[RMDB]
RNA sequence: GGGAACGACUCGAGUAGAGUCGAAAAAGCGAAUUGGAUUUAGAGCGGGCUAAUUUAGAAUUAGGAUUUAUAAAUGCAUUUAAGCAAUAUUCUGGUGUUGAGCUUGUUAGUAUGCAUACUAAAAUAGUACCCUCCAUAGAUUCGUCUAUGGAGGGUAAAAAGAAACAACAACAACAAC
Reactivity to DMS in 0.01 (KOAc 150mM, MgCl2 10mM, bicine 150mM(pH8.5), 24C), signal-to-noise 1, nucleotides 027 to 126: a080g030c040g000a070a080u000u000g020g000a070u000u010u010a060g000a080g050c110g010g030g010c020u020a010a010u000u000u000a140g000a090a070u010u000a030g000g000a120u000u000u000a060u040a060a050a060u000g000c010a050u000u000u030a080a170g010c010a060a050u010a070u000u000c050u000g000g010u000g000u010u000g000a080g000c090u000u000g000u000u000a050g030u000a030u000g030c080a080u000a100c080u000a030a050a050a070u010a130g000